[RMDB]
RNA sequence: GGGAACGACUCGAGUAGAGUCGAAAAGAACUUUAAGAGGUGCAAUAUGAAAUCUAAAAGUAAACAGCCACCUAAUAAAUAUGUUGAAGCAUUCAAACCAUAUUUAUUAACACUAUUGUAUUUGGCAUGUCCUUAAGAUGUUCGCAUCUUAAGGACAAAAAGAAACAACAACAACAAC
Reactivity to 2A3 in 0.01 (KOAc 150mM, MgCl2 10mM, bicine 150mM(pH8.5), 24C), signal-to-noise 3, nucleotides 027 to 126: g030a000a000c070u070u080u100a130a000g060a010g160g020u110g050c060a070a050u180a140u290g130a210a060a000u090c080u200a150a010a000a090g130u150a060a130a060c050a040g000c020c000a050c000c020u010a000a000u010a000a000a000u010a000u010g060u040u040g060a100a060g180c160a150u140u150c020a110a070a000c000c040a010u000a000u030u000u000a010u000u030a070a030c060a020c150u090a090u120u170g020u060a250u070u080u020g060g010c060a050
Reactivity to DMS in 0.01 (KOAc 150mM, MgCl2 10mM, bicine 150mM(pH8.5), 24C), signal-to-noise 2, nucleotides 027 to 126: g010a100a030c020u000u000u010a030a050g070a010g020g020u030g010c040a140a140u000a130u020g010a030a080a040u040c030u030a040a080a070a050g020u000a010a060a130c040a030g010c080c000a150c150c020u010a000a000u030a010a030a000u000a000u000g000u000u000g010a030a140g060c110a060u010u000c100a000a110a110c200c000a000u000a000u000u010u000a000u000u000a020a140c210a080c100u030a120u020u000g010u090a110u010u000u000g000g020c190a180